[RMDB]
RNA sequence: GGGAACGACUCGAGUAGAGUCGAAAAACAGUCCGCGCUGCACGAUUUGGAGGCGUUGUUCGCCAAGUUGGCGGCGGAGUCGACACCAGAUACCAACGGAAUCUCGCGACGUAGCCUCGACAUCGCGGGAGCUAUCCACAUUCGUGUGGAUAGCUCCAAAAGAAACAACAACAACAAC
Reactivity to DMS in 0.01 (KOAc 150mM, MgCl2 10mM, bicine 150mM(pH8.5), 24C), signal-to-noise 1, nucleotides 027 to 126: a080c200a160g000u000c000c040g030c040g000c010u000g000c020a150c050g000a010u000u000u000g010g000a050g010g040c050g000u000u000g000u000u020c000g000c010c010a020a060g030u000u000g000g020c020g030g000c010g010g000a060g030u010c100g000a080c070a150c030c050a060g000a110u030a060c050c070a030a090c130g010g010a140a120u000c050u000c030g000c010g010a010c020g000u010a080g010c000c030u020c080g000a060c030a090u000c030g070c000g020
Reactivity to 2A3 in 0.01 (KOAc 150mM, MgCl2 10mM, bicine 150mM(pH8.5), 24C), signal-to-noise 1, nucleotides 027 to 126: a000c030a050g120u000c010c020g000c010g020c050u120g030c020a080c280g040a040u000u020u040g030g010a020g010g090c090g120u110u130g010u040u070c020g030c010c000a020a070g090u100u030g020g010c020g030g010c020g010g000a010g090u060c070g040a000c030a020c060c010a080g050a120u150a080c050c060a110a000c080g040g020a010a040u070c050u000c070g000c000g010a010c030g030u040a060g010c050c000u030c050g020a020c020a040u010c050g000c000g030